[RMDB]
RNA sequence: GGGAACGACUCGAGUAGAGUCGAAAAAGAUCGGCAUCAUGCGACUGGUCGGCGCCAGCCGCUGGUAUACUCAACUUCCUUUUUUGCUGGAGGCAAUGGUGGCUGCGACCGUAGGCGCCGUCAUCGAUGAUUAAUGGCCAUUCGUGGCCAUUAAUCAAAAAGAAACAACAACAACAAC
Reactivity to 2A3 in 0.01 (KOAc 150mM, MgCl2 10mM, bicine 150mM(pH8.5), 24C), signal-to-noise 3, nucleotides 027 to 126: a000g070a060u090c050g030g020c000a050u050c020a040u260g070c040g070a050c070u060g030g050u110c010g030g040c020g040c020c000a040g020c010c000g040c030u030g030g010u090a050u070a170c080u080c040a210a250c120u060u090c010c080u120u080u070u010u200u240g110c110u060g000g030a010g000g040c040a060a170u100g040g010u030g090g000c020u050g060c020g030a030c010c000g030u040a080g000g030c010g000c020c020g000u000c010a020u010c010g070a030
Reactivity to DMS in 0.01 (KOAc 150mM, MgCl2 10mM, bicine 150mM(pH8.5), 24C), signal-to-noise 3, nucleotides 027 to 126: a100g020a070u010c060g000g000c040a080u000c110a070u010g030c070g020a040c100u010g020g010u010c020g010g010c060g010c080c030a050g020c020c010g010c000u000g010g010u010a070u010a070c080u010c120a090a140c100u000u000c020c010u010u000u000u020u040u010g000c150u000g000g010a070g010g010c060a060a090u010g020g020u000g030g010c010u000g000c020g000a040c030c100g000u000a070g000g000c010g020c000c030g020u010c040a050u000c050g000a110
Annotation:
This 177-nucleotide RNA was probed chemically with 2A3 and DMS. Values cover nucleotides 27 to 126. For 2A3, 2,355 sequencing reads were counted. DMS adducts were read by reverse transcription with MarathonRT. The reactions ran in a buffer of 150 mM KOAc, 10 mM MgCl2 and 150 mM bicine (pH 8.5), at 24 C.